Description
Chemical mapping of a 177-nucleotide RNA with 2A3 and DMS. The 2A3 profile rests on 4,075 reads. Source: RMDB library OK2TST, as collected in RNAgym.

[RMDB]
RNA sequence: GGGAACGACUCGAGUAGAGUCGAAAAGCCUGGGUUCCUGUCUCAUUUCUGCCACAUUAGUCGUAUAAUCUAGACAUGUAACUUGUGUCUCAGUUUCCUUCUCUGUAAAAUAGGGAUAAUUGUAAUAACAAUAAAUGUUGUUCGCAACAUUUAUUGUAAAAGAAACAACAACAACAAC
Reactivity to 2A3 in 0.01 (KOAc 150mM, MgCl2 10mM, bicine 150mM(pH8.5), 24C), signal-to-noise 3, nucleotides 027 to 126: g020c000c000u010g040g010g000u050u010c000c010u050g060u080c000u010c030a050u060u100u030c040u040g030c000c010a060c010a050u070u080a040g040u040c040g040u120a050u050a190a090u050c040u040a000g010a020c010a020u070g030u050a100a040c040u070u100g030u000g020u070c000u000c030a060g000u020u030u000c010c000u010u020c010u000c000u020g050u060a070a050a070a060u060a050g060g000g000a020u120a100a070u180u070g020u080a040a130u140a190
Reactivity to DMS in 0.01 (KOAc 150mM, MgCl2 10mM, bicine 150mM(pH8.5), 24C), signal-to-noise 7, nucleotides 027 to 126: g020c030c010u000g020g010g020u000u000c030c010u000g000u000c030u000c070a080u000u000u000c050u010g010c050c030a080c060a080u000u010a070g010u010c070g020u010a070u010a090a080u000c080u000a070g000a040c020a030u000g020u010a060a090c180u000u000g010u000g010u000c010u010c080a130g010u000u000u000c010c020u000u000c020u000c010u000g010u000a070a060a100a130u010a050g000g000g010a050u010a070a090u000u000g010u010a090a100u010a120